[RMDB]
RNA sequence: GGGAACGACUCGAGUAGAGUCGAAAAGAUAUGGAAUCAGGUAGAAUUCAGAUCGUUGAAAUCGGAAACGAUGGAGAUCUAGAUUCAAACUGAUUCCUAAGUCAGGACCACCGGUUCGCCGGUGGAAUCAACCUAGAUUGUUCGCAAUCUAGGUUGAAAAAGAAACAACAACAACAAC
Reactivity to 2A3 in 0.01 (KOAc 150mM, MgCl2 10mM, bicine 150mM(pH8.5), 24C), signal-to-noise 2, nucleotides 027 to 126: g000a000u070a040u140g000g030a020a000u000c000a000g070g010u070a020g030a020a020u120u040c020a030g010a010u000c020g150u300u060g020a030a040a010u000c000g000g040a050a060a020c020g000a000u020g000g050a020g000a010u000c000u010a050g010a030u020u000c000a180a140a030c010u000g000a000u000u000c000c000u000a010a010g020u000c060a020g060g180a090c000c000a000c000c010g030g020u080u060c240g070c080c000g060g000u000g010g050a000a050
Reactivity to DMS in 0.01 (KOAc 150mM, MgCl2 10mM, bicine 150mM(pH8.5), 24C), signal-to-noise 4, nucleotides 027 to 126: g020a050u010a300u000g000g010a020a010u000c000a000g010g000u000a300g020a010a010u000u000c040a020g010a010u000c000g010u000u000g010a040a150a000u000c010g000g000a140a090a170c000g000a010u000g000g000a070g010a010u000c000u000a040g010a020u000u010c010a000a140a300c000u000g000a000u000u000c010c000u000a020a060g020u010c030a140g010g000a180c000c000a010c000c000g000g010u000u010c220g010c020c010g000g020u000g000g000a050a030